[RMDB]
RNA sequence: GGGAACGACUCGAGUAGAGUCGAAAAGAUAUGGACUAGGCAGGAUUUCAACAGCUAAGCUCGGAAACGAGCUUAGACAUGAAACUGCUCUAGUCCUAAGUCAAAGCGUUCGCCUUCGGGCGAACGCCAUACGGUCUUUGUUCGCAAAGACCGUAUGAAAAGAAACAACAACAACAAC
Reactivity to DMS in 0.01 (KOAc 150mM, MgCl2 10mM, bicine 150mM(pH8.5), 24C), signal-to-noise 5, nucleotides 027 to 126: g010a040u000a300u010g000g000a030c010u000a000g000g010c000a000g000g000a250u000u010u010c150a050a140c280a160g000c010u000a010a010g010c000u000c000g010g000a050a080a170c000g010a020g010c000u000u010a000g010a040c110a160u000g010a050a050a110c010u000g000c010u020c010u000a000g010u000c000c010u000a010a080g010u000c030a080a120a190g000c000g010u000u000c000g010c000c000u000u010c270g030g000g030c010g000a000a000c000g020c000
Reactivity to 2A3 in 0.01 (KOAc 150mM, MgCl2 10mM, bicine 150mM(pH8.5), 24C), signal-to-noise 3, nucleotides 027 to 126: g020a010u050a030u130g000g010a000c010u020a020g010g000c000a010g060g100a110u070u300u210c200a260a150c030a060g000c010u010a010a000g010c010u000c000g030g000a070a040a030c000g010a010g000c010u000u010a000g010a020c000a010u100g070a130a060a030c000u000g000c000u000c010u070a000g000u000c000c000u000a010a000g010u000c020a030a160a070g010c000g000u010u010c030g010c040c000u060u100c300g110g010g000c000g010a020a000c000g010c000

Structure probing data (DMS and 2A3) for a 177-nucleotide construct. The DMS profile rests on 8,796 reads. For DMS the reverse transcriptase was MarathonRT. It was measured as part of the RMDB library TTRDES. 2A3 adducts were read by reverse transcription with SuperScript II with manganese.